[RMDB]
RNA sequence: GGGAACGACUCGAGUAGAGUCGAAAAGAGCUUUUUUUCGAAAAAGCUCCGGCGCAAUGCCUAUGUGUACUCUUCACAAGGGUUUGUGGUGGUCAAUGGCAAUACCAGCAAUCUUCGGAUUGCUGAAUGGUAAUUAUAAAUUCGUUUAUAAUUACCAAAAAGAAACAACAACAACAAC
Reactivity to 2A3 in 0.01 (KOAc 150mM, MgCl2 10mM, bicine 150mM(pH8.5), 24C), signal-to-noise 3, nucleotides 027 to 126: g000a000g010c000u040u050u000u010u020u040u110c110g030a000a000a000a010a000g010c000u000c000c030g060g030c030g000c040a060a050u150g020c000c020u060a150u100g090u010g010u050a080c040u030c050u210u130c030a010c010a070a120g130g070g010u050u090u030g040u040g050g140u040g020g010u020c040a070a080u090g020g040c030a040a080u050a160c040c000a010g010c000a000a000u000c010u020u060c180g140g000a000u000u000g000c000u010g000a010a030
Reactivity to DMS in 0.01 (KOAc 150mM, MgCl2 10mM, bicine 150mM(pH8.5), 24C), signal-to-noise 7, nucleotides 027 to 126: g000a010g000c000u000u000u000u000u000u010u020c120g010a030a000a010a010a010g010c000u000c000c060g010g010c080g010c070a080a050u010g020c020c010u000a080u010g010u000g010u000a060c140u000c100u000u000c050a040c060a060a300g000g010g010u000u000u010g010u000g000g020u000g000g000u000c050a050a050u000g000g000c050a060a070u000a080c160c000a010g000c000a010a010u000c000u000u010c180g020g000a010u000u000g010c000u000g000a020a050

The record gives the reactivity of an RNA of 177 nucleotides to 2A3 and DMS. For DMS the reverse transcriptase was MarathonRT. For 2A3 the reverse transcriptase was SuperScript II with manganese. Conditions: 150 mM KOAc, 10 mM MgCl2 and 150 mM bicine (pH 8.5), 24 C. Values cover nucleotides 27 to 126. The DMS profile rests on 10,273 reads.